The data come from the RNA Mapping Database (RMDB), library M2RFPK. Structure probing data (DMS and 2A3) for a 207-nucleotide construct.

RNA sequence: GGGAACGACUCGAGUAGAGUCGAAAACGUGUCCGUCGGCGUAGCCGACAACAUGCCCAGGUAGCCCAGACCGUCAAGGCUACGGUGCGUUGCGACGCACGGUCUGAUUCUUCACAACGACGUUCACAAGAUCGGAUCACUUUCGAGUGAUCCGAAAGUAAAUGAGGAGGUUCGCCUCCUCAUUUACAAAAGAAACAACAACAACAAC
Reactivity to DMS in 0.01 (KOAc 150mM, MgCl2 10mM, bicine 150mM(pH8.5), 24C), signal-to-noise 1, nucleotides 027 to 156: c050g060u000g020u000c010c070g070u000c010g040g000c040g030u000a110g100c000c010g060a050c000a030a010c010a040u000g010c030c000c030a100g060g030u000a020g000c040c020c050a150g030a150c110c060g030u010c130a150a110g010g040c000u000a040c000g080g040u000g030c030g020u000u000g030c100g000a150c050g000c010a060c010g000g010u000c010u000g020a270u000u000c120u000u010c030a090c070a040a130c020g010a080c000g010u010u000c050a110c040a070a130g030a200u000c000g030g000a030u000c000a010c010u000u000u000c200g010a050g010u000g010a030u000c000c010g000a000a000a060
Reactivity to 2A3 in 0.01 (KOAc 150mM, MgCl2 10mM, bicine 150mM(pH8.5), 24C), signal-to-noise 4, nucleotides 027 to 156: c020g010u030g020u070c110c060g000u010c030g000g010c240g160u220a090g020c000c000g020a000c000a000a000c010a010u070g040c000c000c000a000g090g020u010a010g000c000c080c120a040g030a020c010c000g040u060c060a030a020g010g000c000u010a010c010g000g000u010g000c000g000u000u090g090c130g090a040c010g000c000a000c000g000g000u020c040u010g030a100u110u050c070u140u160c120a100c030a240a100c130g140a050c070g070u100u130c070a060c030a120a090g020a190u020c000g010g000a010u010c000a000c000u020u090u150c280g120a010g000u000g000a010u010c000c000g000a000a000a000
Conditions: 150 mM KOAc, 10 mM MgCl2 and 150 mM bicine (pH 8.5), 24 C.